[RMDB]
The record gives the reactivity of an RNA of 177 nucleotides to 2A3 and DMS. The reactions ran in a buffer of 150 mM KOAc, 10 mM MgCl2 and 150 mM bicine (pH 8.5), at 24 C. The DMS profile rests on 2,233 reads.

RNA sequence: GGGAACGACUCGAGUAGAGUCGAAAAAAUAGCGGGUCAAGGUACAAGGCAGAGAGAUAGGCUCAUCCCAAGUUCUCUUCGGAGUACCAAGACUUCGGUACAGAAGAGAUACCGACUCUUCAUAGAACUAAGGUCUCUAUUUCGAUAGAGACCUUAGAAAAGAAACAACAACAACAAC
Reactivity to 2A3 in 0.01 (KOAc 150mM, MgCl2 10mM, bicine 150mM(pH8.5), 24C), signal-to-noise 1, nucleotides 027 to 126: a000a000u160a090g020c050g020g030g000u030c020a060a020g050g000u020a020c010a060a090g120g000c030a000g010a020g000a010g000a020u090a170g030g040c050u060c040a100u090c030c000c000a010a020g100u040u030c020u010c000u000u010c000g030g000a060g000u000a000c040c010a000a000g000a010c010u060u050c020g000g010u120a090c000a060g010a000a000g020a020g000a020u070a110c000c010g070a070c020u000c020u010u050c000a030u170a100g130a100a050
Reactivity to DMS in 0.01 (KOAc 150mM, MgCl2 10mM, bicine 150mM(pH8.5), 24C), signal-to-noise 4, nucleotides 027 to 126: a080a070u010a040g020c030g020g020g000u000c010a060a300g000g010u000a020c030a020a300g010g020c060a050g000a030g000a070g010a030u020a150g000g000c070u000c280a070u000c180c000c010a030a080g020u000u000c000u000c010u000u000c000g000g010a300g000u000a000c000c000a030a300g000a040c090u000u010c070g000g000u000a030c110a130g000a010a010g010a020g000a040u000a120c030c010g000a120c010u000c010u010u000c030a160u010a120g000a080a150